Chemical mapping of a 177-nucleotide RNA with DMS and 2A3. The reactions ran in a buffer of 150 mM KOAc, 10 mM MgCl2 and 150 mM bicine (pH 8.5), at 24 C. Values cover nucleotides 27 to 126. For 2A3 the reverse transcriptase was SuperScript II with manganese. The 2A3 profile rests on 479 reads. High DMS reactivity at an A or C suggests that its Watson-Crick edge is free.

RNA sequence: GGGAACGACUCGAGUAGAGUCGAAAACUGCAAGGGACGAAACACAGUCUCGAUGCUUUUUGACUGUUCCGUCCCGCUCUCGAGCUUUCGGCCGCCUCGACUGUUGAGGGUGAAUAACGAUGGAUACCAAGAUGAGCCCUUUCGAGGGCUCAUCUUGAAAAGAAACAACAACAACAAC
Reactivity to DMS in 0.01 (KOAc 150mM, MgCl2 10mM, bicine 150mM(pH8.5), 24C), signal-to-noise 1, nucleotides 027 to 126: c010u000g010c040a180a020g000g000g000a000c010g000a110a150a010c300a020c140a040g000u000c000u000c140g010a140u030g000c000u010u000u050u000u010g000a020c000u000g000u000u000c130c000g040u000c000c000c000g010c050u050c010u000c060g000a110g000c080u000u030u000c030g000g070c080c020g000c010c000u050c000g000a210c160u000g000u050u000g000a280g020g000g010u000g070a110a020u020a010a020c000g080a000u040g000g000a020u050a120c100
Reactivity to 2A3 in 0.01 (KOAc 150mM, MgCl2 10mM, bicine 150mM(pH8.5), 24C), signal-to-noise 1, nucleotides 027 to 126: c100u190g100c010a170a240g030g000g000a010c000g040a000a140a000c050a000c000a050g020u000c010u050c100g040a020u180g080c160u100u090u000u060u050g000a000c000u040g000u060u110c120c000g000u000c000c000c000g010c000u010c000u000c000g050a160g010c000u050u020u100c060g000g000c000c010g090c000c000u000c000g010a010c110u020g000u010u010g100a080g000g000g000u070g100a170a030u030a000a000c000g000a000u000g000g010a000u040a060c020